An RNA of 207 nucleotides, treated with 2A3 and read out base by base. For 2A3 the reverse transcriptase was SuperScript II with manganese. The reactions ran in a buffer of 150 mM KOAc, 10 mM MgCl2 and 150 mM bicine (pH 8.5), at 24 C.
[RMDB]
RNA sequence: GGGAACGACUCGAGUAGAGUCGAAAACUCGCAGCUCCUGCAGAUGCUGCGUCGCCUGUGCGGAGUGUCUCCGGUAGCCUGCCAAGAGGCGUACGUCGAGGGAACGACGUGCGCCCAAUGCUACGAGGAGCUGACUAUCAUCCCCAACCAGGGCCGCAAUCAUCAGGUCUUUCGAGACCUGAUGAUUAAAAGAAACAACAACAACAAC
Reactivity to 2A3 in 0.01 (KOAc 150mM, MgCl2 10mM, bicine 150mM(pH8.5), 24C), signal-to-noise 2, nucleotides 027 to 156: c020u030c100g000c010a010g000c010u010c030c010u060g030c030a000g000a040u020g010c030u090g060c020g030u000c040g030c050c010u060g060u130g010c020g000g070a000g010u010g040u040c010u000c040c000g060g020u040a050g000c030c090u100g090c110c000a160a000g110a180g040g000c000g000u000a010c010g000u000c000g000a180g050g130g000a150a140c000g000a010c000g000u000g000c010g000c000c000c000a010a000u020g000c010u000a020c020g030a080g000g000a000g000c000u000g040a080c020u070a030u140c060a070u030c020c000c000c000a030a030c070c010a000g000g000g090c030c030g050c060